[RMDB]
RNA sequence: GGGAACGACUCGAGUAGAGUCGAAAAUCACACUUAGCUACCUUUGCUGAGUUGGAAGCUGCGCAGAAAGCCUAUCAGGAAGCUAUGGACUCUGGUGACACCUCACCACAAGUUCUUAAGGCUUUGCUAAGCAAGGGGUUCGCCCCUUGCAAAAGAAACAACAACAACAAC
Reactivity to 2A3 in 0.01 (KOAc 150mM, MgCl2 10mM, bicine 150mM(pH8.5), 24C), signal-to-noise 5, nucleotides 027 to 129: u070c020a010c000a010c050u040u040a000g020c020u060a110c030c070u160u160u140g000c000u000g000a020g000u060u050g070g010a040a020g010c050u080g010c020g000c030a020g100a090a020a000g030c010c000u060a090u130c040a000g050g100a060a010g010c020u030a090u110g000g000a000c000u000c040u040g000g000u000g010a060c030a100c110c090u050c000a000c000c010a010c020a040a030g000u030u020c000u080u100a120a090g000g000c000u030u000u020g030c030u030a070a060
Reactivity to DMS in 0.01 (KOAc 150mM, MgCl2 10mM, bicine 150mM(pH8.5), 24C), signal-to-noise 7, nucleotides 027 to 129: u000c000a070c090a050c060u010u020a000g000c050u000a130c020c090u040u050u030g060c000u000g020a120g030u030u020g000g030a090a070g040c050u030g050c080g010c110a040g060a060a060a040g010c040c060u000a070u130c150a110g000g000a090a050g020c000u050a020u050g000g000a030c080u010c300u040g000g010u020g050a000c200a170c240c200u020c010a020c040c000a020c290a060a050g020u040u010c030u000u000a080a130g000g020c070u040u040u030g040c010u040a050a010